[RMDB]
RNA sequence: GGGAACGACUCGAGUAGAGUCGAAAACAACUCGAUGAAGAGCGUCAGCGGACGGCCUCCGAGACGAGCGAUGGACAGUAGAGCUUCUGCUCCUACCAGUCGCGUGCUGACUCUCGCGCCCACCCGCGUGCGAGAUGAAGUUCGCUUCAUCUCGCACAAAAGAAACAACAACAACAAC
Reactivity to DMS in 0.01 (KOAc 150mM, MgCl2 10mM, bicine 150mM(pH8.5), 24C), signal-to-noise 2, nucleotides 027 to 126: c120a120a080c080u030c010g000a160u000g000a110a120g020a030g000c060g000u000c140a160g020c000g000g010a110c080g020g000c040c010u000c040c000g000a030g000a000c020g000a030g010c010g000a000u000g000g000a040c000a050g000u000a030g000a020g000c030u000u000c300u000g010c000u000c230c070u000a000c000c010a010g000u000c000g020c000g010u000g000c140u010g010a030c300u000c000u000c000g010c010g020c000c020c080a250c130c000c000g000c030
Reactivity to 2A3 in 0.01 (KOAc 150mM, MgCl2 10mM, bicine 150mM(pH8.5), 24C), signal-to-noise 1, nucleotides 027 to 126: c040a010a000c050u030c030g080a120u150g110a140a120g020a000g100c050g100u090c100a010g000c000g000g030a000c010g010g000c000c000u040c030c000g000a000g000a000c010g020a030g130c010g010a020u080g030g000a020c010a020g000u000a020g000a000g010c010u240u190c130u300g000c010u100c040c030u030a000c000c000a000g000u010c000g010c000g000u000g040c080u020g000a000c000u000c020u030c010g010c070g000c010c000c000a090c000c000c010g030c080